Conditions: 150 mM KOAc, 10 mM MgCl2 and 150 mM bicine (pH 8.5), 24 C. The record gives the reactivity of an RNA of 207 nucleotides to 2A3 and DMS. For 2A3, 1,252 sequencing reads were counted. For DMS, 2,958 sequencing reads were counted. For 2A3 the reverse transcriptase was SuperScript II with manganese.
[RMDB]
RNA sequence: GGGAACGACUCGAGUAGAGUCGAAAACACAAGGACGAGGACGGGUUCUUGUAUGUCUUGUACUCGGGAGAAAACACCUUCGGCGAGAUUGAGGGCGUGGAGGAGGUUGCACUCUGAUUGAGCGGCUCUCAGGUCUAUUAGUUGGAUGGCGGCGGUGAGAAUAAUCGUUUUUCGAAACGAUUAUUCUAAAAGAAACAACAACAACAAC
Reactivity to 2A3 in 0.01 (KOAc 150mM, MgCl2 10mM, bicine 150mM(pH8.5), 24C), signal-to-noise 2, nucleotides 027 to 156: c040a000c010a050a030g040g000a010c020g040a020g010g030a000c020g020g020g000u000u020c010u020u020g080u040a090u070g040u010c020u040u090g040u030a090c030u000c000g030g040g000a060g020a040a020a010a010c050a070c020c000u070u080c080g030g000c060g020a040g020a070u050u120g020a030g000g000g000c040g030u030g020g010a070g020g010a010g010g000u110u110g000c020a030c000u040c020u030g050a160u090u110g070a070g090c040g080g020c010u000c000u010c040a010g000g000u010c010u020a100u090u050a130g050u040u080g040g000a030u010g010g010c010g000g000c010g000g020u060g010
Reactivity to DMS in 0.01 (KOAc 150mM, MgCl2 10mM, bicine 150mM(pH8.5), 24C), signal-to-noise 1, nucleotides 027 to 156: c090a110c020a090a090g000g010a070c020g010a230g000g000a110c040g000g020g000u000u000c000u010u000g020u000a030u000g010u000c020u000u040g010u000a110c060u010c010g010g000g020a150g000a050a040a070a100c060a080c060c050u000u000c040g020g050c070g010a080g030a200u010u000g020a070g020g010g010c010g040u000g010g000a210g000g040a040g030g030u010u000g050c070a110c000u000c020u000g000a160u000u000g010a090g000c040g020g010c010u010c020u000c030a110g010g030u000c030u000a020u020u000a050g030u000u000g020g000a040u020g040g020c030g000g020c060g020g020u030g010